An RNA of 177 nucleotides, treated with DMS and 2A3 and read out base by base.
2A3 adducts were read by reverse transcription with SuperScript II with manganese.
The DMS profile rests on 31,111 reads.
Conditions: 150 mM KOAc, 10 mM MgCl2 and 150 mM bicine (pH 8.5), 24 C.
RNA sequence: GGGAACGACUCGAGUAGAGUCGAAAAGGAGAUCGAAGAAGACCGACGUCAGCACGGUCCGGAUGUAGGUCCGCAUGCAUCCGAGUUGACGAAACUUGACGAUUUCCAAAGCGGACAAGAAGUCAAAAUAGUGGAUAAAUUUCGAUUUAUCCACUAUAAAAGAAACAACAACAACAAC
Reactivity to DMS in 0.01 (KOAc 150mM, MgCl2 10mM, bicine 150mM(pH8.5), 24C), signal-to-noise 9, nucleotides 027 to 126: g010g010a020g010a000u010c010g010a120a160g010a140a090g010a040c040c020g010a180c050g010u030c140a070g030c110a130c040g000g000u010c030c020g000g000a010u000g010u000a010g000g010u000c000c010g010c010a070u000g000c010a010u000c000c000g010a060g000u000u000g010a120c170g000a150a020a030c010u000u000g000a190c030g000a020u000u000u000c000c000a040a090a100g010c000g000g000a020c030a180a110g010a100a100g010u010c080a060a110a130
Reactivity to 2A3 in 0.01 (KOAc 150mM, MgCl2 10mM, bicine 150mM(pH8.5), 24C), signal-to-noise 9, nucleotides 027 to 126: g000g000a000g000a000u010c010g030a090a030g070a050a010g020a080c000c020g050a070c040g160u230c100a040g030c150a040c040g010g010u010c010c000g000g000a000u000g000u010a000g000g020u000c000c000g000c010a000u000g000c000a000u000c000c000g010a010g010u010u030g070a110c150g060a070a010a010c010u010u030g020a010c010g010a010u010u000u000c000c000a030a040a000g000c000g000g010a000c010a020a040g150a070a010g080u190c100a060a030a060